[RMDB]
RNA sequence: GGGAACGACUCGAGUAGAGUCGAAAAAAGCAGGGUGUGAGAGAAACUCUCUCCCAGCCGGUUGGCGCAGCCACCCUUUUCGACUCUACUCGGGUUAGCUGCGCGAACUGGCUGGCGUUCCCCAGAAAUCACUAGACUAAUUCGUUAGUCUAGUGAUAAAAGAAACAACAACAACAAC
Reactivity to DMS in 0.01 (KOAc 150mM, MgCl2 10mM, bicine 150mM(pH8.5), 24C), signal-to-noise 5, nucleotides 027 to 126: a060a080g020c150a040g000g010g010u000g010u010g010a090g010a110g010a140a120a140c140u000c020u000c040u010c090c010c000a030g000c000c010g010g010u000u000g010g010c010g000c020a020g000c010c030a030c020c000c030u000u000u000u010c010g010a020c010u000c000u000a010c000u000c020g010g010g010u000u000a010g020c010u000g000c030g010c020g000a010a020c010u000g000g000c000u000g000g000c020g010u000u000c010c000c000c120a200g000a060a100
Reactivity to 2A3 in 0.01 (KOAc 150mM, MgCl2 10mM, bicine 150mM(pH8.5), 24C), signal-to-noise 3, nucleotides 027 to 126: a000a000g250c080a020g020g000g000u040g000u050g030a060g030a010g030a130a140a100c020u020c010u000c040u070c040c030c000a000g010c010c000g010g020u000u020g100g010c020g010c040a010g010c010c010a010c000c000c010u090u080u040u110c040g000a010c010u000c010u090a000c000u000c000g010g000g000u000u010a000g010c010u000g010c030g000c040g030a010a020c020u020g010g010c000u000g010g010c000g000u010u000c010c010c000c000a040g080a070a150